Source: RMDB library OK3TST, as collected in RNAgym.
Chemical mapping of a 207-nucleotide RNA with DMS and 2A3.
DMS adducts were read by reverse transcription with MarathonRT.
[RMDB]
RNA sequence: GGGAACGACUCGAGUAGAGUCGAAAACUCGCUGUCUUCUGAGAAACCCUUUUCGUUCCAGAGCUGGUGCGAACUGCAACUCGAAAACAGCAGAUCAGAAGCAGACAAGGCCAAGCUUCCGUUUGCCAUUGAGCCUCCGAACCUUAGCUACUGGGGCGGGUAAACAGUGAUUCGUCACUGUUUACCCAAAAGAAACAACAACAACAAC
Reactivity to DMS in 0.01 (KOAc 150mM, MgCl2 10mM, bicine 150mM(pH8.5), 24C), signal-to-noise 2, nucleotides 027 to 156: c020u000c080g000c060u020g020u020c000u000u000c010u000g010a090g000a250a130a120c100c000c080u020u000u010u000c020g040u000u000c040c060a130g000a120g020c030u010g020g080u020g010c060g010a070a100c150u000g020c030a000a260c020u000c010g000a070a010a050a090c120a040g000c000a080g000a230u010c050a040g020a000a040g080c020a150g000a160c030a100a030g010g030c040c030a070a250g020c020u000u000c010c020g030u000u000u000g010c050c020a180u000u000g000a120g030c000c020u000c000c010g000a050a080c020c020u000u000a100g010c040u000a150c080u000g020g020g020g030c080
Reactivity to 2A3 in 0.01 (KOAc 150mM, MgCl2 10mM, bicine 150mM(pH8.5), 24C), signal-to-noise 4, nucleotides 027 to 156: c020u040c060g030c040u030g020u150c020u050u010c060u130g030a030g060a110a120a120c050c000c000u050u050u010u050c020g020u020u000c000c030a040g000a100g210c180u070g010g010u020g010c010g020a070a070c030u020g000c020a040a090c030u060c090g070a060a050a040a040c020a030g000c020a010g010a050u070c010a010g010a050a000g010c020a010g020a140c040a080a070g040g000c040c040a060a050g000c040u140u070c050c030g090u070u120u090g030c020c020a060u030u130g030a030g020c000c000u010c040c000g070a060a060c000c020u140u170a010g030c050u140a110c030u070g010g000g010g020c020
For 2A3 the reverse transcriptase was SuperScript II with manganese. For 2A3, 2,684 sequencing reads were counted. The DMS profile rests on 2,344 reads.